[RMDB]
RNA sequence: GGGAACGACUCGAGUAGAGUCGAAAAGGAGUGCUACCGAAAGGUAGCACUCCAACAAAUCGGUGUAAGUGCAGCCCGGCUUACACCGUGCGGCACAGCGGAAACGCUGAUGUCGUAUACGGGGCUAUAUAAAUACUCGAUUCGUCGAGUAUUUAUAAAAAGAAACAACAACAACAAC
Reactivity to 2A3 in 0.01 (KOAc 150mM, MgCl2 10mM, bicine 150mM(pH8.5), 24C), signal-to-noise 2, nucleotides 027 to 126: g010g000a000g010u000g000c000u010a000c010c000g060a100a100a070g010g000u000a000g010c000a000c000u000c000c010a000a000c000a000a010a000u070c000g000g000u000g000u000a010a000g000u010g060c040a000g000c010c000c000g000g010c000u000u000a000c000a010c000c000g000u040g000c010g010g000c000a000c000a010g010c010g000g030a090a050a010c020g000c010u010g000a090u010g000u000c000g010u010a020u050a010c050g100g010g000g000c030u010a000
Reactivity to DMS in 0.01 (KOAc 150mM, MgCl2 10mM, bicine 150mM(pH8.5), 24C), signal-to-noise 6, nucleotides 027 to 126: g010g010a020g020u000g010c000u000a000c000c000g010a120a110a170g010g010u000a010g020c010a000c000u000c000c000a030a040c110a050a080a070u010c010g010g010u000g000u000a010a010g010u000g010c080a050g010c000c000c000g000g000c000u000u000a000c000a010c000c000g030u000g000c010g000g000c000a010c000a010g010c000g000g010a140a110a200c000g020c000u000g000a040u000g030u000c000g020u000a060u010a060c100g010g010g020g020c000u000a160
An RNA of 177 nucleotides, treated with 2A3 and DMS and read out base by base.
The RNA was probed in 150 mM KOAc, 10 mM MgCl2 and 150 mM bicine (pH 8.5) at 24 C.
For 2A3, 11,393 sequencing reads were counted.
2A3 adducts were read by reverse transcription with SuperScript II with manganese.